[RMDB]
RNA sequence: GGGAACGACUCGAGUAGAGUCGAAAAGGAGAGAGUGACAGUUGCAAACAAGCUUGAAGGACAUUUUGCUCUAAGUGAGAUGGAGGUCAAGGACUUGGAGCAGAAAAGAUACAUGAUUAUAUGUUUUGGCAGGAUCAUUCUAGCAGCUGGGCAAGGAACCUGGUUAACAAUUCGUUGUUAACCAGGUAAAAGAAACAACAACAACAAC
Reactivity to DMS in 0.01 (KOAc 150mM, MgCl2 10mM, bicine 150mM(pH8.5), 24C), signal-to-noise 3, nucleotides 027 to 156: g010g000a110g000a090g010a080g050u010g000a130c050a090g020u000u000g020c020a090a120a120c100a080a130g010c030u000u010g030a090a080g020g020a130c050a170u000u010u010u010g020c020u010c020u000a040a050g050u000g020a120g010a090u000g030g010a090g020g000u010c050a090a180g000g020a040c020u000u000g020g010a030g000c020a050g000a040a040a080a130g010a160u000a050c050a020u000g000a130u010u010a100u010a070u010g000u000u000u000u000g010g020c010a080g010g000a050u010c040a100u000u000c020u000a080g000c070a050g000c030u010g010g010g010c050a040a040g020g010a070
Reactivity to 2A3 in 0.01 (KOAc 150mM, MgCl2 10mM, bicine 150mM(pH8.5), 24C), signal-to-noise 5, nucleotides 027 to 156: g040g000a010g000a010g010a010g020u050g020a020c020a020g020u070u050g060c050a040a080a070c020a040a100g050c030u090u080g040a060a020g040g000a010c020a110u050u040u040u040g010c010u000c010u040a030a020g000u010g060a100g030a100u070g050g020a050g010g050u030c060a060a070g080g010a020c000u010u020g020g010a010g000c010a000g050a010a040a020a010g040a010u080a040c030a040u050g020a070u190u130a080u090a020u180g060u030u070u080u020g030g000c010a000g020g010a020u040c020a040u110u050c020u020a020g000c000a000g000c010u030g010g010g000c030a030a040g030g000a010